This 177-nucleotide RNA was probed chemically with DMS.
Values are in units of 0.01, from 0 to 300, in steps of 10.
The reactions ran in a buffer of 150 mM KOAc, 10 mM MgCl2 and 150 mM bicine (pH 8.5), at 24 C.
The data come from the RNA Mapping Database (RMDB), library OK2TST.
The DMS profile rests on 721 reads.
DMS adducts were read by reverse transcription with MarathonRT.
RNA sequence: GGGAACGACUCGAGUAGAGUCGAAAACACCGCUUCGGCAAAGCCCUUGUCGAAACCGACAGGUGCGUUGAGACCGGUGCCGACAGCCGUGCCGCCCUGCGCCAGCAGGAAGACGUCGGCAAGCGAACCACGUCGGGUGGUUCGCCACCCGACGUGGAAAAGAAACAACAACAACAAC
Reactivity to DMS in 0.01 (KOAc 150mM, MgCl2 10mM, bicine 150mM(pH8.5), 24C), signal-to-noise 1, nucleotides 027 to 126: c020a110c030c090g000c110u030u010c010g030g000c030a020a090a240g000c010c030c000u000u010g030u000c000g020a070a120a130c170c010g030a010c010a010g000g000u000g020c010g010u000u000g000a100g020a150c300c020g000g000u030g000c030c000g030a070c090a120g010c010c100g050u010g000c020c070g030c080c010c000u010g000c010g000c270c200a140g000c010a040g000g000a140a040g000a000c030g010u000c000g010g020c090a160a110g030c050g000a050a070